[RMDB]
RNA sequence: GGGAACGACUCGAGUAGAGUCGAAAACCUGAGGAGCUCGCGAAUCAUCCUCUCGAUGAGGGCAGAGAGCCCUGCAGGGGAGAGCCGUUCGGGAAGGCGCUCCUCCCGCUUCAGAACCGGUUCGGCGAAACACAACUUCGUUCGCGAAGUUGUGUUUAAAAGAAACAACAACAACAAC
Reactivity to 2A3 in 0.01 (KOAc 150mM, MgCl2 10mM, bicine 150mM(pH8.5), 24C), signal-to-noise 1, nucleotides 027 to 126: c000c010u000g030a020g000g030a040g030c050u100c100g070c090g050a000a080u070c030a100u030c030c030u020c030u000c040g080a100u170g180a030g010g030g000c090a050g160a020g060a040g300c020c000c000u010g010c010a040g000g010g030g010a020g010a010g020c000c050g010u050u060c100g100g000g000a110a030g100g030c000g030c010u020c000c000u000c010c000c000g070c060u170u140c070a120g000a170a070c060c010g050g090u010u070c010g060g000c030g000
Reactivity to DMS in 0.01 (KOAc 150mM, MgCl2 10mM, bicine 150mM(pH8.5), 24C), signal-to-noise 2, nucleotides 027 to 126: c000c000u010g030a030g010g020a070g020c030u010c050g040c020g010a120a120u000c070a140u000c040c040u000c060u000c150g040a100u000g010a050g000g010g030c020a160g010a180g000a170g010c000c020c000u000g010c070a030g000g010g020g000a040g000a080g020c050c290g000u010u000c040g040g000g000a090a130g010g000c120g020c010u020c020c010u000c000c180c040g040c070u000u010c100a120g000a090a130c130c030g000g010u010u000c030g020g000c080g000